[RMDB]
RNA sequence: GGGAACGACUCGAGUAGAGUCGAAAAGACACCACCUGGGGUGCCGCUGCGAAGGUCACCGAGGACGGUUUCGACUGGGGGAAGGUGAACGGCUCGCAGGUCACGAUCACGGUUCCUGCCGGCACCGUCGCCGACGGCACGCAGAUCACCCGAUACGUCCUAUCGUAUACUUCGGUAUACGAUAGGAAAAAGAAACAACAACAACAAC
Reactivity to DMS in 0.01 (KOAc 150mM, MgCl2 10mM, bicine 150mM(pH8.5), 24C), signal-to-noise 1, nucleotides 027 to 156: g020a160c000a160c070c010a130c110c060u000g000g040g000g080u000g010c080c100g000c070u000g010c060g090a130a110g040g000u010c030a110c020c000g020a070g030g000a160c010g000g000u000u030u010c070g010a040c030u000g020g050g070g020g020a090a190g020g000u000g060a070a070c000g000g000c020u000c100g060c090a170g010g020u020c090a160c000g010a150u020c050a080c030g030g000u010u000c000c020u010g050c050c010g030g000c050a000c000c020g020u000c020g010c010c000g050a040c000g030g000c030a300c030g000c030a060g050a120u020c020a060c020c010c000g010a100u000a000c180g000
Reactivity to 2A3 in 0.01 (KOAc 150mM, MgCl2 10mM, bicine 150mM(pH8.5), 24C), signal-to-noise 2, nucleotides 027 to 156: g040a010c020a040c100c050a080c020c060u070g000g020g000g000u010g030c060c050g000c010u010g010c010g020a160a050g090g010u060c020a010c080c020g030a090g020g040a000c000g020g050u010u120u250c190g050a280c010u010g010g000g000g000g000a060a010g090g010u030g000a060a060c030g040g010c010u050c070g130c090a050g000g000u050c030a020c110g050a080u100c020a020c130g060g050u030u060c020c000u080g300c000c030g040g000c030a040c010c000g020u010c080g100c080c050g040a070c050g010g010c000a010c010g020c010a010g040a000u080c000a030c000c010c000g010a030u000a200c120g000
Source information: The record gives the reactivity of an RNA of 207 nucleotides to DMS and 2A3. The reactions ran in a buffer of 150 mM KOAc, 10 mM MgCl2 and 150 mM bicine (pH 8.5), at 24 C. The 2A3 profile rests on 1,014 reads. Source: RMDB library OK3TST, as collected in RNAgym.